[RMDB]
RNA sequence: GGGAACGACUCGAGUAGAGUCGAAAAGGACGCAGAUACCCAAGUCCAGUGGCUCCAAUCCGAACUGACCGCUACCCGCGAUCUAUACAGCAAGUGCAUGGUUCCAAAGGCUGAGUAAUGCGCCAUAUCAAGAUGGAUACCCUGUAUCCGUUCAUUGUGAUUACAACUAGUUCGCUAGUUGUAAUCAAAAAGAAACAACAACAACAAC
Reactivity to DMS in 0.01 (KOAc 150mM, MgCl2 10mM, bicine 150mM(pH8.5), 24C), signal-to-noise 3, nucleotides 027 to 156: g020g010a030c030g030c050a060g020a220u000a060c000c000c020a230a150g000u010c010c040a170g020u010g010g010c010u020c040c020a060a120u020c040c060g010a110a140c090u000g000a070c030c010g020c010u000a120c090c050c030g010c120g020a070u000c030u010a090u010a080c040a030g000c070a090a130g040u010g000c040a090u000g010g000u010u020c030c040a080a110a090g010g030c020u000g000a070g020u000a050a110u000g010c020g000c010c020a110u000a100u000c060a070a110g010a060u010g010g010a060u000a010c010c090c080u000g030u010a050u000c010c010g010u000u000c030a120u010u010g030
Reactivity to 2A3 in 0.01 (KOAc 150mM, MgCl2 10mM, bicine 150mM(pH8.5), 24C), signal-to-noise 6, nucleotides 027 to 156: g020g010a030c030g020c040a020g030a140u150a140c000c010c020a080a000g010u020c020c010a030g050u030g070g000c010u020c030c020a040a080u060c040c030g040a050a050c030u030g030a050c030c010g010c030u070a090c030c020c030g030c020g020a010u010c040u090a100u050a150c040a020g030c040a090a050g030u050g060c030a020u040g050g000u060u020c020c000a060a040a050g020g000c020u040g040a030g080u090a040a040u090g040c010g000c020c000a040u070a040u210c060a070a020g030a060u060g010g000a010u020a020c160c080c060u090g000u000a000u000c000c000g020u060u050c060a100u100u130g070